RNA sequence: GGGAACGACUCGAGUAGAGUCGAAAAUAACGUACUUUCGAGUACGUUAAGUCUCCCCGCGCUAGCAGGGCUGAAGAGAAGAUGGAGGAGCUGGUGGUGGAAUUAGGGGGGGAUUCGUCCCCCCCAAAUUCCCUCAGUACUUCGGUACUGAGGGAAUAAAAGAAACAACAACAACAAC
Reactivity to DMS in 0.01 (KOAc 150mM, MgCl2 10mM, bicine 150mM(pH8.5), 24C), signal-to-noise 4, nucleotides 027 to 126: u010a010a010c000g010u000a000c000u010u000u010c150g010a020g010u000a000c000g010u000u000a000a060g000u010c130u000c010c010c000c130g000c080g020c060u000a060g020c070a060g000g000g000c070u000g010a070a090g000a120g010a080a070g000a080u000g010g010a080g000g000a060g010c060u010g000g010u000g010g010u000g010g010a070a090u010u010a070g010g010g000g010g000g020g010a040u000u010c170g000u000c000c000c000c000c000c000c000a000a010